[RMDB]
Annotation: The data come from the RNA Mapping Database (RMDB), library OK2TRN. Structure probing data (DMS) for a 177-nucleotide construct.
RNA sequence: GGGAACGACUCGAGUAGAGUCGAAAACACUGUUUUAGAUGGGAUUACUGCUAGGAUGGCAAUUAUGGCAGGAGCGGAAUACAUUGUUAGUCCAAGUUUUGAUAGCGAAACAGCGGAAUUAUGUAAAUCACCGGAUAGUGUUCGCACUAUCCGGUGAAAAAGAAACAACAACAACAAC
Reactivity to DMS in 0.01 (KOAc 150mM, MgCl2 10mM, bicine 150mM(pH8.5), 24C), signal-to-noise 2, nucleotides 027 to 126: c040a070c060u000g000u010u000u000u000a040g010a130u000g040g010g020a080u010u000a120c100u000g000c030u000a090g050g010a020u000g020g000c050a030a040u000u010a100u000g000g020c020a080g000g010a070g000c100g030g000a080a060u000a050c120a050u000u000g000u000u000a040g000u000c000c000a110a300g010u000u000u000u000g000a140u020a130g000c060g000a000a020a050c010a070g000c130g000g000a060a070u000u000a080u010g000u010a020a150a100
Conditions: 150 mM KOAc, 10 mM MgCl2 and 150 mM bicine (pH 8.5), 24 C.